[RMDB]
RNA sequence: GGGAACGACUCGAGUAGAGUCGAAAAUUAGGUUCCUAGUGAUAAAGCGGAAUCAGCCUUUUCACAAGAUUAAUCUUUUGGUCGGUCUUAACUAGUUGAAGAUUCGGUGUUUUUGCGAUUUUACCCCAUAAGUUACGUCAUUCGUGACGUAACUUAUAAAAGAAACAACAACAACAAC
Reactivity to 2A3 in 0.01 (KOAc 150mM, MgCl2 10mM, bicine 150mM(pH8.5), 24C), signal-to-noise 2, nucleotides 027 to 126: u090u050a060g040g140u030u010c000c010u030a060g010u000g020a060u090a180a070a000g020c020g070g010a090a110u120c030a030g040c000c030u020u050u080u060c030a040c010a010a000g030a100u080u140a100a050u100c000u050u170u090u090g060g010u000c020g010g010u030c000u020u010a060a050c030u010a060g110u060u080g050a070a000g020a160u170u150c030g040g030u020g000u030u040u030u050u110g000c000g010a020u000u060u000u190a110c000c010c000c010
Reactivity to DMS in 0.01 (KOAc 150mM, MgCl2 10mM, bicine 150mM(pH8.5), 24C), signal-to-noise 5, nucleotides 027 to 126: u010u010a080g020g020u000u000c070c010u000a090g020u000g000a040u000a020a040a060g030c040g000g010a120a090u010c160a120g010c030c020u000u000u000u000c020a020c050a110a090g010a100u000u010a070a080u000c040u000u000u010u010g020g010u000c030g020g010u000c030u000u000a080a080c090u000a040g010u010u000g000a060a050g000a050u000u000c060g010g010u000g010u000u000u000u000u000g010c040g010a140u000u000u000u000a170c090c000c010c110